[RMDB]
RNA sequence: GGGAACGACUCGAGUAGAGUCGAAAACGAAGGACUUUCGAGUCCUUCGACUUACCGAGAAAGAUCCUCGGUAUAAAUCUGGAACCCUAGGAAACAAGGGAAUGAACGGAAUCUUCGGAUUCCGUAAUAAGUGAGUUGAUUUCGAUCAACUCACUUAAAAAGAAACAACAACAACAAC
Reactivity to 2A3 in 0.01 (KOAc 150mM, MgCl2 10mM, bicine 150mM(pH8.5), 24C), signal-to-noise 2, nucleotides 027 to 126: c000g010a010a000g000g010a010c030u040u050u130c220g040a010g010u000c000c010u010u000c010g000a010c000u020u000a000c000c010g010a000g030a030a270a010g070a080u030c000c000u000c000g000g000u010a010u030a030a030a000u030c050u030g110g110a150a120c020c000c010u030a060g040g080a130a120a040c060a100a040g000g000g060a040a100u170g070a070a010c010g020g020a000a010u000c020u050u080c180g020g000a010u010u000c000c000g000u010a000a020
Reactivity to DMS in 0.01 (KOAc 150mM, MgCl2 10mM, bicine 150mM(pH8.5), 24C), signal-to-noise 3, nucleotides 027 to 126: c030g010a020a000g010g010a010c000u000u000u000c160g000a020g010u000c000c000u000u000c010g010a070c160u010u000a000c000c010g000a020g020a130a200a160g000a120u010c050c000u000c010g000g010u000a010u000a030a090a110u020c070u000g030g010a060a140c010c010c000u000a180g000g000a060a070a130c070a090a030g000g000g010a090a050u000g000a120a020c010g010g010a010a010u010c000u010u010c150g020g010a020u000u000c000c000g010u010a010a070